[RMDB]
Chemical mapping of a 207-nucleotide RNA with DMS and 2A3. It was measured as part of the RMDB library OK3TST.
RNA sequence: GGGAACGACUCGAGUAGAGUCGAAAACUUACCUCCGAGCGAUGGCCUCCUUUCGAGAUGAUAUCCGUCGACUCGCUAUUGAGGGCGCCACCCCUGGGGAGAUCCUUAAGCUCUGUGACAAGUUUAGAGAUCAGGACCUUGCGAAUCUCGGUAUCCACUUCCUGUCAGAAUUCGUUCUGACAGGAAGAAAAGAAACAACAACAACAAC
Reactivity to DMS in 0.01 (KOAc 150mM, MgCl2 10mM, bicine 150mM(pH8.5), 24C), signal-to-noise 1, nucleotides 027 to 156: c050u000u010a100c030c000u010c020c030g010a040g000c040g000a080u000g010g010c100c000u000c010c010u020u000u000c070g000a080g030a170u030g000a120u010a100u000c060c050g000u000c030g000a100c000u000c030g010c070u000a060u010u020g020a020g000g030g000c180g030c050c030a160c020c010c040c030u010g030g070g000g010a100g020a060u000c000c030u000u000a050a130g000c000u000c030u000g040u000g020a250c130a080a070g000u010u000u020a060g050a020g000a020u010c060a090g000g020a040c030c020u030u000g060c030g010a140a100u000c050u010c020g050g020u000a090u010c020c050a230
Reactivity to 2A3 in 0.01 (KOAc 150mM, MgCl2 10mM, bicine 150mM(pH8.5), 24C), signal-to-noise 2, nucleotides 027 to 156: c030u060u120a070c010c010u000c030c030g000a010g020c030g090a080u060g030g000c000c040u050c010c050u110u120u110c160g040a110g010a110u100g010a000u070a130u190c060c040g050u050c010g060a180c030u020c010g000c040u070a190u090u170g040a050g010g000g000c030g050c000c020a040c010c000c000c010u020g010g010g020g020a050g010a020u040c000c000u020u020a050a010g020c020u030c020u090g090u010g040a110c060a060a000g020u070u000u040a020g050a010g020a100u030c050a040g000g100a070c000c020u050u050g010c030g050a100a070u040c020u000c040g030g030u060a030u060c010c040a040
For 2A3 the reverse transcriptase was SuperScript II with manganese. High DMS reactivity at an A or C suggests that its Watson-Crick edge is free. The 2A3 profile rests on 1,128 reads. Values cover nucleotides 27 to 156. The reactions ran in a buffer of 150 mM KOAc, 10 mM MgCl2 and 150 mM bicine (pH 8.5), at 24 C.